Source information: The record gives the reactivity of an RNA of 207 nucleotides to 2A3 and DMS. The 2A3 profile rests on 4,083 reads. The reactions ran in a buffer of 150 mM KOAc, 10 mM MgCl2 and 150 mM bicine (pH 8.5), at 24 C. For DMS the reverse transcriptase was MarathonRT. 2A3 adducts were read by reverse transcription with SuperScript II with manganese.

[RMDB]
RNA sequence: GGGAACGACUCGAGUAGAGUCGAAAAACACUCUUCGGAGUGUAUCACGCGUACUACCUAAGGAGAUGAUGUACUACCCACCUACUCCCAAAUAGGAGUAGAGGUACACAUCGCCGGUGAAAUACUUAGGUAUCGCCUACAGCUCUUUCGAGAGCAAAUUGGCUUUAUACUUCGGUAUAAAGCCAAUAAAAGAAACAACAACAACAAC
Reactivity to 2A3 in 0.01 (KOAc 150mM, MgCl2 10mM, bicine 150mM(pH8.5), 24C), signal-to-noise 6, nucleotides 027 to 156: a000c010a010c000u020c010u010u060c300g130g000a010g010u030g020u070a110u170c160a080c120g040c030g030u100a120c020u000a000c020c000u030a040a010g090g020a130g050a030u060g040a150u010g000u000a020c010u070a100c020c020c020a020c000c010u000a000c000u030c000c000c040a160a280a240u300a170g000g010a000g000u000a000g000a010g000g000u000a010c010a000c010a010u000c000g050c050c050g120g050u200g110a080a100a030u190a070c010u010u000a010g000g030u030a060u300c000g010c010c000u080a090c090a050g000c000u000c010u030u130u210c290g100a020g000a000g010c000a020a110
Reactivity to DMS in 0.01 (KOAc 150mM, MgCl2 10mM, bicine 150mM(pH8.5), 24C), signal-to-noise 2, nucleotides 027 to 156: a040c000a020c000u000c000u000u010c300g040g010a050g020u020g010u000a030u020c050a060c120g010c040g060u000a100c070u010a030c010c000u000a050a130g020g010a100g010a040u010g010a090u000g030u010a020c020u000a000c020c020c040a300c120c010u010a030c010u000c000c010c000a020a160a190u010a040g000g020a050g010u000a000g000a000g000g050u010a050c070a030c000a010u000c000g010c030c070g000g050u000g020a100a160a100u010a070c040u010u000a050g020g010u000a030u000c030g030c010c050u000a080c090a180g010c010u010c000u000u000u000c150g010a080g010a030g020c000a000a100